[RMDB]
An RNA of 177 nucleotides, treated with DMS and 2A3 and read out base by base. Values are in units of 0.01, from 0 to 300, in steps of 10. Conditions: 150 mM KOAc, 10 mM MgCl2 and 150 mM bicine (pH 8.5), 24 C. For DMS the reverse transcriptase was MarathonRT.

RNA sequence: GGGAACGACUCGAGUAGAGUCGAAAAACGGCGCGGUUACGACCGCGCCGAUGUGACCCUAGAAUAAUUACCCAACGUCUCUGAGUCUCGGUUUUGAGAGGGUGAGUAAUUAUUCUAGGGUCACAAACAAUUACAUUUAUUUCGAUAAAUGUAAUUGAAAAGAAACAACAACAACAAC
Reactivity to DMS in 0.01 (KOAc 150mM, MgCl2 10mM, bicine 150mM(pH8.5), 24C), signal-to-noise 2, nucleotides 027 to 126: a090c040g020g040c030g120c000g050g080u000u000a140c220g000a070c000c000g070c010g060c010c010g020a020u000g000u000g000a010c000c000c000u000a000g010a010a000u010a000a000u000u000a010c000c010c000a030a050c000g000u000c000u000c010u020g000a070g010u000c030u030c270g010g000u000u000u000u000g000a000g000a020g000g010g010u000g000a020g000u000a000a010u000u000a000u000u000c000u010a010g000g000g000u000c010a010c000a020a080a130
Reactivity to 2A3 in 0.01 (KOAc 150mM, MgCl2 10mM, bicine 150mM(pH8.5), 24C), signal-to-noise 7, nucleotides 027 to 126: a000c040g000g000c000g010c070g030g070u120u140a180c300g060a030c170c000g000c010g000c010c000g010a000u010g000u000g000a000c000c000c000u000a000g000a000a000u000a000a000u000u010a000c010c020c040a130a040c110g300u010c000u000c010u040g090a080g130u090c040u070c180g250g020u140u080u130u140g020a010g000a010g020g100g010u030g000a020g000u000a000a000u000u000a000u000u000c000u000a000g000g000g000u000c000a000c000a000a000a000